[RMDB]
RNA sequence: GGGAACGACUCGAGUAGAGUCGAAAACUCCACUCUAUGCGGGUUGCCGUAUACAGAAGCAUCGAUUUUCACACGCCAUGAUGCGCCUGUGCAAAUCUUUUGCAACUGUAUACGGCGAUUUAGCAGAUAGGUAGAAUUUGUUCGCAAAUUCUACCUAAAAAGAAACAACAACAACAAC
Reactivity to 2A3 in 0.01 (KOAc 150mM, MgCl2 10mM, bicine 150mM(pH8.5), 24C), signal-to-noise 6, nucleotides 027 to 126: c010u000c010c010a110c010u070c020u050a080u200g000c000g010g000g000u000u010g000c000c000g000u010a000u000a000c000a010g010a020a000g010c000a000u020c020g010a000u000u000u000u010c000a000c000a000c010g010c010c050a260u300g080a180u200g110c050g010c060c050u030g000u000g000c020a000a000a000u000c000u030u070u030u090g000c000a010a020c010u000g000u000a000u000a000c000g000g000c000g000a000u000u000u010a030g000c010a000g010a040
Reactivity to DMS in 0.01 (KOAc 150mM, MgCl2 10mM, bicine 150mM(pH8.5), 24C), signal-to-noise 3, nucleotides 027 to 126: c110u020c010c050a180c190u020c070u030a080u010g000c010g000g010g000u000u000g010c000c000g000u000a010u000a000c000a020g000a050a300g000c000a000u010c170g010a030u000u000u000u000c000a020c000a020c290g000c000c050a210u040g030a140u010g020c070g010c050c100u000g030u010g000c070a000a000a010u000c000u010u010u000u000g000c020a030a300c000u000g000u000a000u010a000c000g000g000c000g000a000u000u010u020a060g050c010a040g000a180
Record summary
An RNA of 177 nucleotides, treated with 2A3 and DMS and read out base by base. The RNA was probed in 150 mM KOAc, 10 mM MgCl2 and 150 mM bicine (pH 8.5) at 24 C.